[RMDB]
RNA sequence: GGGAACGACUCGAGUAGAGUCGAAAACAGACUCACUUCGGUGAGUCUGAAAGGAGUAAUCGAUAGCGAAAACUACCAGAUUACACAAGGGUAGUGACAAAAAAAGUUAGAGCUUCGGCUCUAACAACUAUCUACGACAGUUCGCUGUCGUAGAUAGAAAAGAAACAACAACAACAAC
Reactivity to 2A3 in 0.01 (KOAc 150mM, MgCl2 10mM, bicine 150mM(pH8.5), 24C), signal-to-noise 3, nucleotides 027 to 126: c000a000g010a010c000u000c010a010c000u020u040c110g140g000u000g010a010g000u000c000u000g020a010a000a010g070g030a100g010u050a060a060u040c020g050a140u110a060g120c110g090a080a050a030a020c000u020a000c010c010a040g020a090u060u130a030c060a000c050a090a070g040g010g000u030a040g030u030g070a040c110a040a180a010a000a020a000a020g000u000u000a010g010a000g000c010u040u060c300g020g000c010u000c000u000a000a000c000a000a000
Reactivity to DMS in 0.01 (KOAc 150mM, MgCl2 10mM, bicine 150mM(pH8.5), 24C), signal-to-noise 3, nucleotides 027 to 126: c000a010g000a010c000u000c000a010c000u010u010c170g020g010u000g000a020g010u000c000u000g000a020a080a130g000g000a140g020u000a000a000u000c000g030a050u000a040g010c030g000a060a060a160a100c000u000a000c010c010a160g010a030u010u000a010c020a130c110a110a120g020g000g010u000a050g010u000g030a100c090a000a000a060a030a080a090a090g000u000u000a000g000a020g000c000u000u020c220g060g000c000u010c000u000a000a010c010a060a130